This 177-nucleotide RNA was probed chemically with 2A3 and DMS. For 2A3, 6,882 sequencing reads were counted.
[RMDB]
RNA sequence: GGGAACGACUCGAGUAGAGUCGAAAACAGGGUCGCGCGGCCCGAAAACGUCUGGGUGCCCGUGGUCACCUUUCUGGGGGCGGGCGCGCUUGCCGUCAAGACGGUGCGAGAACAUGCCCGGGGAACGGCUGUACAUAUGGUUCGCCAUAUGUACAGCAAAAGAAACAACAACAACAAC
Reactivity to 2A3 in 0.01 (KOAc 150mM, MgCl2 10mM, bicine 150mM(pH8.5), 24C), signal-to-noise 7, nucleotides 027 to 126: c060a050g060g020g030u050c020g030c030g040c150g170g060c000c010c000g050a040a040a020a030c030g080u030c030u040g040g020g020u030g010c010c000c010g010u040g070g100u180c070a240c060c000u080u250u170c210u200g020g000g010g000g010c000g000g010g000c000g000c010g010c000u030u110g020c010c010g050u040c080a090a020g100a040c020g010g010u060g010c030g030a120g040a060a040c050a080u240g010c000c000c000g010g010g010g030a090a040c060g040
Reactivity to DMS in 0.01 (KOAc 150mM, MgCl2 10mM, bicine 150mM(pH8.5), 24C), signal-to-noise 4, nucleotides 027 to 126: c090a140g000g000g030u000c040g040c070g010c060g020g020c000c010c010g020a080a040a070a050c070g000u020c030u020g010g020g020u010g010c000c000c030g030u020g020g010u030c050a140c040c030u000u020u010c210u010g000g000g000g000g000c000g010g000g000c020g000c010g000c040u000u010g020c000c010g010u000c120a110a100g020a250c260g000g010u010g010c050g000a080g000a060a110c090a100u010g010c000c000c020g020g010g010g010a140a060c220g010